[RMDB]
Structure probing data (DMS and 2A3) for a 207-nucleotide construct. 2A3 adducts were read by reverse transcription with SuperScript II with manganese. The data come from the RNA Mapping Database (RMDB), library OK3TST. The RNA was probed in 150 mM KOAc, 10 mM MgCl2 and 150 mM bicine (pH 8.5) at 24 C. For DMS, 6,783 sequencing reads were counted. DMS adducts were read by reverse transcription with MarathonRT. For 2A3, 2,285 sequencing reads were counted.
RNA sequence: GGGAACGACUCGAGUAGAGUCGAAAAAAAACCACGAGAACAUCAUGGCUUGCGCUAAGUCUCCACUGGAGAACACUUGGUGGGCUGAGCAAGAUUCUCCGUUCUGCUUCCUUGCGUUCUGCUUUGAGUACGCUGGGGUACAGCACCACGGCCUGAGUGGAUGUAUCUAUUUCGAUAGAUACAUCCAAAAAGAAACAACAACAACAAC
Reactivity to DMS in 0.01 (KOAc 150mM, MgCl2 10mM, bicine 150mM(pH8.5), 24C), signal-to-noise 2, nucleotides 027 to 156: a020a000a020a020c000c000a030c020g020a080g000a110a090c060a130u010c020a040u010g010g070c020u010u000g010c060g000c050u010a040a050g020u000c020u000c010c010a140c080u000g000g030a150g010a050a060c070a050c050u010u020g000g040u000g020g020g030c030u010g000a110g050c030a070a070g000a180u010u000c010u000c020c010g030u000u000c020u010g000c010u010u000c030c010u000u000g000c030g030u000u000c030u010g010c130u000u000u010g000a090g040u000a020c060g010c000u000g000g010g020g010u000a030c080a120g020c090a080c000c050a030c020g000g010c030c000u010g000a160g020
Reactivity to 2A3 in 0.01 (KOAc 150mM, MgCl2 10mM, bicine 150mM(pH8.5), 24C), signal-to-noise 3, nucleotides 027 to 156: a000a000a000a030c060c010a070c050g070a040g040a070a030c050a090u100c020a070u150g040g010c010u020u030g030c020g030c050u050a040a040g040u000c020u010c020c030a220c120u200g060g000a070g030a140a040c060a040c170u050u090g000g000u040g010g100g000c050u030g010a010g010c030a060a000g000a070u090u020c040u000c020c020g000u040u000c030u040g020c000u100u060c000c000u010u010g000c000g030u000u060c030u040g180c160u090u130u300g070a010g020u010a010c010g010c010u040g000g010g000g010u070a060c040a090g000c000a020c020c040a010c010g060g000c000c020u070g030a050g070